[RMDB]
RNA sequence: GGGAACGACUCGAGUAGAGUCGAAAAUUGAGGCGGAUAAGUUGCUAAGGCCGGGCUUCCCUUAUUCUUCGGGAGCCUGAGCGAUACGCUCUUGCUUGCUCGAAGAACUUCGAGGCUAGUUGGCCAAGACUCCCGGCACAUUCGUGUGCUGGGGGUUAAAAGAAACAACAACAACAAC
Reactivity to 2A3 in 0.01 (KOAc 150mM, MgCl2 10mM, bicine 150mM(pH8.5), 24C), signal-to-noise 9, nucleotides 027 to 126: u130u140g040a040g020g030c040g010g030a040u050a180a090g050u050u050g030c040u070a090a120g020g000c000c010g020g030g000c020u050u050c020c000c000u010u070a080u030u010c010u010u010c000g010g000g010a010g000c000c010u000g000a000g000c000g060a080u080a300c160g000c000u000c000u000u020g000c010u120u160g080c020u010c020g000a000a000g010a020a030c050u130u100c090g020a050g010g000c020u020a020g070u050u120g020g000c010c010a020a010
Reactivity to DMS in 0.01 (KOAc 150mM, MgCl2 10mM, bicine 150mM(pH8.5), 24C), signal-to-noise 9, nucleotides 027 to 126: u020u030g000a070g010g010c040g000g010a080u010a060a090g010u010u010g000c050u010a100a100g000g010c010c020g010g000g010c040u010u000c100c040c040u010u020a120u010u000c020u000u000c030g010g000g000a050g000c000c030u000g000a000g020c000g010a160u040a060c130g020c000u000c000u000u010g010c010u010u020g020c000u010c000g010a010a010g000a020a040c260u020u030c180g000a050g000g010c050u000a070g010u020u020g000g010c000c010a080a220
The record gives the reactivity of an RNA of 177 nucleotides to 2A3 and DMS.
2A3 is a SHAPE reagent: it acylates the 2'-hydroxyl of flexible nucleotides of all four kinds.
Conditions: 150 mM KOAc, 10 mM MgCl2 and 150 mM bicine (pH 8.5), 24 C.
Values cover nucleotides 27 to 126.